[RMDB]
RNA sequence: GGGAACGACUCGAGUAGAGUCGAAAAAGCUGUGGGGAGAGAGCAAGGUCAACCCUACGGAUGCUCUCCUGCUGAAAGCUGGAGCAGACGGGACCCUGCAGGCCAGCUCUGAGCGGGGCCCCGAGGACACCCGUUAAGGAUUCGUCCUUAACGGGUGAAAAGAAACAACAACAACAAC
Reactivity to DMS in 0.01 (KOAc 150mM, MgCl2 10mM, bicine 150mM(pH8.5), 24C), signal-to-noise 3, nucleotides 027 to 126: a070g010c010u010g020u000g000g000g010g020a140g030a080g010a030g020c060a110a180g000g010u000c050a150a220c030c020c020u020a060c040g000g010a080u010g010c040u000c010u010c030c020u000g000c000u010g010a080a060a110g000c000u000g000g020a070g000c090a030g000a090c040g010g050g010a050c060c060c000u000g020c010a200g020g000c010c000a070g010c020u000c020u000g010a150g020c010g000g000g020g000c020c000c010c000g000a080g020g010a240
Reactivity to 2A3 in 0.01 (KOAc 150mM, MgCl2 10mM, bicine 150mM(pH8.5), 24C), signal-to-noise 1, nucleotides 027 to 126: a000g070c040u030g010u050g000g000g000g010a090g010a010g010a000g040c070a100a050g020g030u060c020a070a080c010c000c000u010a010c020g050g020a050u100g010c010u020c010u020c010c020u030g000c000u130g160a270a080a000g030c000u010g020g000a000g000c080a010g030a070c010g020g030g000a030c000c000c020u010g020c020a010g020g140c010c010a030g040c030u030c010u030g080a060g010c020g020g000g020g000c010c000c000c000g020a050g020g070a010